An RNA of 177 nucleotides, treated with DMS and 2A3 and read out base by base.
RNA sequence: GGGAACGACUCGAGUAGAGUCGAAAACGGGAAUGACAAGGGAUUGUGUCGAAUGUUGUUUGAACAGCAUGUAGCUUGCACAGGAAUGCACAGCUAUAGUUUGUUCAUCCGUUCUUGUGCAGCAUCGUGAGCAUACGAAGUUCGCUUCGUAUGCUCAAAAAGAAACAACAACAACAAC
Reactivity to DMS in 0.01 (KOAc 150mM, MgCl2 10mM, bicine 150mM(pH8.5), 24C), signal-to-noise 3, nucleotides 027 to 126: c090g030g010g000a070a050u010g010a020c080a140a130g000g010g000a080u000u010g020u010g030u000c030g040a100a070u000g020u010u020g020u000u010u000g020a020a060c050a100g000c190a050u030g000u010a140g010c020u000u000g000c000a010c010a040g020g000a060a090u000g010c150a050c110a000g020c020u030a100u000a060g020u000u030u030g000u010u030c090a030u030c140c050g000u000u030c020u020u020g030u000g010c020a030g000c020a140u010c070g000
Reactivity to 2A3 in 0.01 (KOAc 150mM, MgCl2 10mM, bicine 150mM(pH8.5), 24C), signal-to-noise 3, nucleotides 027 to 126: c020g050g040g090a040a140u190g050a070c050a080a100g140g040g030a170u110u100g040u010g020u110c040g070a140a080u030g020u120u020g000u010u020u100g070a100a050c020a000g040c030a060u060g010u040a000g030c050u050u110g000c000a020c020a040g070g130a110a030u050g000c110a040c050a010g000c000u060a050u070a190g060u060u200u080g040u090u100c000a040u040c000c070g040u040u000c030u030u040g010u000g020c000a000g000c000a010u070c000g040
For 2A3, 1,443 sequencing reads were counted. For 2A3 the reverse transcriptase was SuperScript II with manganese. The data come from the RNA Mapping Database (RMDB), library OK1LIB. The reactions ran in a buffer of 150 mM KOAc, 10 mM MgCl2 and 150 mM bicine (pH 8.5), at 24 C.